[RMDB]
RNA sequence: GGGAACGACUCGAGUAGAGUCGAAAAAAGUCUAUAUGCCCACCUUUGCUAGUGCGGGUGGAUGUUCUAAGUGUAUAUAGAUGCCUAUAUUUGAAAUAAUAUAGAUGCCCAAACUCUCUCUCAUGGAGAGAGAAUGGAUGCGUACGAAGCAUAUGCAAUUUAAUCCAGUAUUCGUACUGGAUUAAAUAAAAGAAACAACAACAACAAC
Reactivity to DMS in 0.01 (KOAc 150mM, MgCl2 10mM, bicine 150mM(pH8.5), 24C), signal-to-noise 2, nucleotides 027 to 156: a020a070g000u000c030u000a040u000a020u000g010c000c020c040a030c020c010u000u010u000g070c000u000a160g050u000g050c070g030g020g050u020g000g020a060u000g020u000u000c100u030a070a130g020u000g030u010a020u000a040u000a070g030a050u000g010c120c000u000a020u000a000u020u010u000g000a140a110a150u000a030a020u000a010u000a010g000a170u000g010c020c000c010a030a060a270c010u010c000u000c000u010c000u000c200a190u020g030g000a020g030a030g000a000g000a030a100u000g030g010a100u000g010c010g010u000a100c130g010a120a130g010c070a190u000a070u000g020c040a100
Reactivity to 2A3 in 0.01 (KOAc 150mM, MgCl2 10mM, bicine 150mM(pH8.5), 24C), signal-to-noise 1, nucleotides 027 to 156: a010a010g020u040c000u000a000u000a020u000g010c000c000c000a000c010c010u160u170u240g040c100u170a140g080u120g270c000g000g000g000u020g000g000a080u140g090u070u020c110u150a030a060g020u040g030u090a000u000a000u000a030g020a020u060g010c020c000u010a030u000a050u010u010u020g110a160a150a090u090a130a000u010a090u010a040g050a100u090g060c010c020c010a000a050a110c000u000c000u000c000u020c010u020c040a150u290g090g020a010g000a000g000a000g000a000a010u050g030g000a050u050g020c020g000u000a090c040g030a070a020g010c040a020u050a020u050g020c050a060